An RNA of 177 nucleotides, treated with 2A3 and DMS and read out base by base.
RNA sequence: GGGAACGACUCGAGUAGAGUCGAAAAGAGGAGACAGCGGUGAGCGCGGCAAAGGCCACUCGGCGCGGGCAGGGGAGACCGGCCGGGACAGCUCAGCGACACGCACUCAGGCUGACUCGGGCUGGCAACGUUAGCGGUAUUUCGAUACCGCUAACGUAAAAGAAACAACAACAACAAC
Reactivity to 2A3 in 0.01 (KOAc 150mM, MgCl2 10mM, bicine 150mM(pH8.5), 24C), signal-to-noise 4, nucleotides 027 to 126: g080a010g020g050a050g010a020c030a020g010c020g060g210u020g010a030g000c030g000c020g050g010c030a080a090a040g080g010c020c000a050c030u020c010g030g000c280g020c040g150g010g030c080a130g030g090g000g020a070g020a030c000c000g000g000c000c000g010g010g010a090c080a010g000c010u020c120a010g030c010g070a090c040a030c130g010c000a020c020u050c020a000g020g010c000u010g010a050c000u000c000g000g040g000c030u020g000g020c020a030
Reactivity to DMS in 0.01 (KOAc 150mM, MgCl2 10mM, bicine 150mM(pH8.5), 24C), signal-to-noise 3, nucleotides 027 to 126: g000a120g060g030a050g000a100c130a070g000c000g010g000u020g040a040g010c030g020c060g030g020c100a030a250a090g000g010c000c070a200c060u000c000g000g030c020g010c100g010g000g000c050a100g010g010g030g020a080g010a120c020c010g000g010c010c010g020g000g000a080c120a070g010c000u000c120a270g000c130g000a070c120a220c070g020c010a100c050u000c090a090g000g020c000u010g000a110c000u000c000g000g000g030c040u000g000g000c140a090

Values cover nucleotides 27 to 126. 2A3 adducts were read by reverse transcription with SuperScript II with manganese. Conditions: 150 mM KOAc, 10 mM MgCl2 and 150 mM bicine (pH 8.5), 24 C.